[RMDB]
RNA sequence: GGGAACGACUCGAGUAGAGUCGAAAAGGGGUCAGGCUUGUCAGGGACCCAGUAUCGCGAUGAAAUAUGGCUGAAGCCUCCACGGCCAUAUGGAGCGAUACGGUCCCUUGGAUUUAGCCUGACGGAGGCACCCAAAAGGACGGCUUCGGCCGUCCAAGCAUUAAUUCAUGUUCGCAUGAAUUAAUGCAAAAGAAACAACAACAACAAC
Reactivity to DMS in 0.01 (KOAc 150mM, MgCl2 10mM, bicine 150mM(pH8.5), 24C), signal-to-noise 1, nucleotides 027 to 156: g010g010g010g020u000c000a020g010g010c010u000u000g010u000c040a080g020g010g020a000c020c010c110a300g040u000a000u010c000g020c020g030a200u010g000a190a200a020u000a000u020g000g000c010u000g000a080a090g040c000c000u000c020c030a300c030g020g010c010c000a000u000a000u000g000g000a040g030c010g040a020u000a010c030g000g040u000c000c000c020u000u000g000g010a090u000u010u000a060g020c000c030u010g000a000c010g010g010a040g040g030c020a140c030c020c030a090a070a080a170g000g000a010c020g010g030c020u000u000c080g050g040c000c030g000u000c000c000a000a270
Reactivity to 2A3 in 0.01 (KOAc 150mM, MgCl2 10mM, bicine 150mM(pH8.5), 24C), signal-to-noise 3, nucleotides 027 to 156: g100g010g020g010u000c000a010g000g000c010u060u050g040u110c150a150g010g000g000a000c010c050c050a020g010u000a000u000c000g000c000g300a300u010g000a010a000a000u000a000u000g000g000c000u030g030a180a010g030c000c000u020c000c000a010c010g000g000c000c000a000u000a000u000g000g000a000g000c000g000a000u000a000c000g000g000u010c000c000c000u040u120g020g000a000u090u040u120a000g000c000c000u010g000a000c010g000g000a000g000g000c000a050c000c000c010a060a120a020a020g010g000a010c000g000g000c030u090u150c290g160g000c020c000g000u000c000c000a000a000
The record gives the reactivity of an RNA of 207 nucleotides to DMS and 2A3. Conditions: 150 mM KOAc, 10 mM MgCl2 and 150 mM bicine (pH 8.5), 24 C. 2A3 adducts were read by reverse transcription with SuperScript II with manganese.